[RMDB]
RNA sequence: GGGAACGACUCGAGUAGAGUCGAAAAGGUGGAAUUCUUCCCAGCUCCGACGGAAUGGCGCUCGUGGUUAGUUCGGCCGUCUUGUAUCACGCGAGCGUUUGUAUACCCGUGCGACUCAAGGCGGCGGGUCCUAUUUAGGGUUCGCCCUAAAUAGGACAAAAGAAACAACAACAACAAC
Reactivity to DMS in 0.01 (KOAc 150mM, MgCl2 10mM, bicine 150mM(pH8.5), 24C), signal-to-noise 5, nucleotides 027 to 126: g020g020u000g000g000a080a120u010u010c110u000u000c020c000c000a220g020c090u000c050c030g010a050c020g010g000a120a080u010g010g010c020g000c020u000c010g030u000g010g020u010u010a080g010u010u000c070g010g010c010c000g030u000c000u000u010g000u000a090u010c100a060c030g010c000g000a040g020c060g020u010u000u010g020u010a100u010a080c090c010c000g010u000g010c050g000a040c080u010c010a010a010g010g010c010g000g010c000g000g000
Reactivity to 2A3 in 0.01 (KOAc 150mM, MgCl2 10mM, bicine 150mM(pH8.5), 24C), signal-to-noise 3, nucleotides 027 to 126: g060g000u080g020g060a090a110u140u040c030u050u030c000c010c030a030g010c050u020c020c010g020a020c000g020g050a160a220u130g080g000c030g000c010u020c030g020u020g030g080u060u100a140g040u120u080c040g120g000c000c000g030u010c000u020u010g010u040a060u130c030a030c120g020c000g030a090g060c070g020u030u010u080g060u040a160u050a040c000c010c010g000u010g070c050g040a030c020u000c030a010a000g020g030c000g010g000c000g000g020

Structure probing data (DMS and 2A3) for a 177-nucleotide construct. The RNA was probed in 150 mM KOAc, 10 mM MgCl2 and 150 mM bicine (pH 8.5) at 24 C. High 2A3 reactivity points to a flexible backbone, as in loops and unpaired stretches. Source: RMDB library RFMREP, as collected in RNAgym. For DMS, 7,596 sequencing reads were counted.